[RMDB]
RNA sequence: GGGAACGACUCGAGUAGAGUCGAAAAUUUGCUCACUCAAGGGAAGUCUUGCUCAUCCCCUUCUGAAAGGGGGUGAUAAAAAUGACAGCAUAUGAAACAAUCUCUUUAAUGAUUGCUUUUGGCAUGCCGAGAGCGUACUUUUCGAAGUACGCUCUCGAAAAGAAACAACAACAACAAC
Reactivity to 2A3 in 0.01 (KOAc 150mM, MgCl2 10mM, bicine 150mM(pH8.5), 24C), signal-to-noise 4, nucleotides 027 to 126: u080u080u130g000c010u000c010a060c010u070c060a120a030g040g020g020a100a030g030u020c010u020u170g060c010u040c020a030u030c000c000c010c010u080u060c070u220g250a200a020a000g010g000g000g000g000u010g000a000u070a000a100a020a000a000u140g040a010c040a010g000c000a010u020a020u200g030a090a040a010c020a000a010u010c010u000c000u180u180u240a140a130u290g010a020u020u010g020c050u080u050u030u040g080g000c100a030u020g030c020
Reactivity to DMS in 0.01 (KOAc 150mM, MgCl2 10mM, bicine 150mM(pH8.5), 24C), signal-to-noise 2, nucleotides 027 to 126: u000u010u000g010c010u030c060a090c130u040c050a040a110g040g020g030a060a180g010u030c030u000u000g030c220u000c020a010u000c000c000c000c000u010u000c230u060g010a090a090a040g000g000g010g030g020u050g000a000u030a000a010a060a080a060u000g020a070c120a100g010c020a010u040a080u000g000a040a030a080c010a010a000u000c000u010c210u020u000u010a110a070u040g000a030u000u000g000c170u010u010u000u010g000g010c070a010u000g010c040
An RNA of 177 nucleotides, treated with 2A3 and DMS and read out base by base. The RNA was probed in 150 mM KOAc, 10 mM MgCl2 and 150 mM bicine (pH 8.5) at 24 C. Values cover nucleotides 27 to 126. Values are in units of 0.01, from 0 to 300, in steps of 10. As a SHAPE reagent, 2A3 marks flexible, mostly unpaired nucleotides at the ribose 2'-OH.